[RMDB]
RNA sequence: GGGAACGACUCGAGUAGAGUCGAAAAAAGCUCAUUUUCGAAUGAGCUUGAAGCGUGAACGCAGGAUAAGGCAGAAACGCGCCGCUGAACCUCCCAAGCGAAAGAUUAAGGUCUUCGGACCUUAAAACAUGCAAGUAAGAUUCGUCUUACUUGCAUGAAAAGAAACAACAACAACAAC
Reactivity to 2A3 in 0.01 (KOAc 150mM, MgCl2 10mM, bicine 150mM(pH8.5), 24C), signal-to-noise 4, nucleotides 027 to 126: a000a000g010c010u000c010a010u020u000u030u070c100g070a030a000u000g000a000g000c000u000u020g000a030a000g010c000g030u040g020a090a010c030g000c040a020g100g090a200u140a260a100g120g010c040a020g060a050a080a010c020g010c020g030c030c020g020c030u050g030a080a070c000c030u010c020c010c010a010a010g030c020g070a140a040a040g050a020u030u040a010a010g010g000u000c000u030u090c190g080g010a010c010c000u000u000a000a000a000a000
Reactivity to DMS in 0.01 (KOAc 150mM, MgCl2 10mM, bicine 150mM(pH8.5), 24C), signal-to-noise 8, nucleotides 027 to 126: a010a000g010c000u000c000a000u000u000u010u020c160g010a020a010u000g000a010g010c000u000u000g000a080a100g010c020g020u000g000a110a190c160g010c020a080g020g010a140u010a110a150g000g000c020a060g000a200a110a060c050g010c030g010c100c020g010c030u000g000a080a090c110c100u000c010c000c010a100a080g000c060g010a100a070a120g000a160u000u000a010a010g000g010u000c000u010u010c200g030g010a010c000c000u000u000a000a020a080a160